[RMDB]
RNA sequence: GGGAACGACUCGAGUAGAGUCGAAAAAAAGAUUAUGAUGUCAUUAUGACUAGAGAACCAGGUGGUGUUCCUACUGGUGAAGAAAUACGUAAAAUUGUAUUAGAAGGCAAUGAUAUGGACAUUAGAAUAUGCUUCGAUUAUUCGUAAUCGAAGCAUAAAAAGAAACAACAACAACAAC
Reactivity to DMS in 0.01 (KOAc 150mM, MgCl2 10mM, bicine 150mM(pH8.5), 24C), signal-to-noise 5, nucleotides 027 to 126: a030a030a080g020a110u030u030a070u010g000a050u010g000u000c010a110u030u030a070u030g010a170c050u000a100g000a100g000a190a020c010c010a010g020g000u030g020g020u020g010u000u000c000c010u010a140c030u000g000g010u000g000a110a050g010a050a060a020u020a070c060g010u010a040a060a110a050u020u020g000u000a020u020u020a090g010a120a070g000g000c030a020a030u000g000a130u000a020u020g000g000a020c070a050u020u000a060g000a090a110
Reactivity to 2A3 in 0.01 (KOAc 150mM, MgCl2 10mM, bicine 150mM(pH8.5), 24C), signal-to-noise 3, nucleotides 027 to 126: a000a000a000g150a010u120u060a060u250g040a010u010g000u030c000a010u000u270a130u270g050a070c030u020a010g040a010g030a180a020c000c020a040g020g000u050g010g050u100g120u140u100c000c020u020a040c000u000g000g000u090g070a020a060g050a010a070a040u090a020c060g010u080a000a080a130a070u180u160g040u040a050u050u010a090g070a150a010g090g080c000a020a020u050g000a070u010a060u160g040g010a000c010a010u010u000a040g020a080a010